[RMDB]
Description
This 177-nucleotide RNA was probed chemically with 2A3 and DMS. For 2A3 the reverse transcriptase was SuperScript II with manganese. Source: RMDB library OK1LIB, as collected in RNAgym. The reactions ran in a buffer of 150 mM KOAc, 10 mM MgCl2 and 150 mM bicine (pH 8.5), at 24 C. For DMS, 1,134 sequencing reads were counted.
RNA sequence: GGGAACGACUCGAGUAGAGUCGAAAAGCGGAAAUGAGUGCGUGGUAGCACAAACCAGACCAAUCCGCGGCACAAGGUCGCACAUGCACAGCUUCGCCUGUGCAAAGCGAACAAGGCGAAGAAAGAAGAUACGAGGGCAGUUCGCUGCCCUCGUAUCAAAAGAAACAACAACAACAAC
Reactivity to 2A3 in 0.01 (KOAc 150mM, MgCl2 10mM, bicine 150mM(pH8.5), 24C), signal-to-noise 2, nucleotides 027 to 126: g040c030g060g020a030a010a080u160g050a110g040u060g150c160g020u030g000g080u070a000g070c100a040c030a200a010a000c030c000a010g010a000c010c010a010a010u000c000c010g000c000g050g000c050a000c000a060a090g090g030u040c020g050c000a000c010a090u040g000c000a000c000a040g030c000u110u160c110g010c060c000u010g000u000g000c000a000a000a000g000c000g000a000a030c010a000a080g010g000c010g020a000a010g080a020a200a000g130a210a000
Reactivity to DMS in 0.01 (KOAc 150mM, MgCl2 10mM, bicine 150mM(pH8.5), 24C), signal-to-noise 1, nucleotides 027 to 126: g000c020g000g000a090a180a030u000g000a160g080u000g000c030g060u000g010g000u070a240g090c090a070c160a040a100a130c000c080a030g040a170c000c030a020a110u000c030c000g000c000g000g020c070a100c030a000a070g010g000u010c030g000c060a030c270a070u040g000c000a050c000a060g040c000u200u040c170g030c040c000u000g000u040g000c000a000a060a200g020c000g050a050a080c030a080a120g020g000c000g000a010a010g000a000a050a160g020a000a040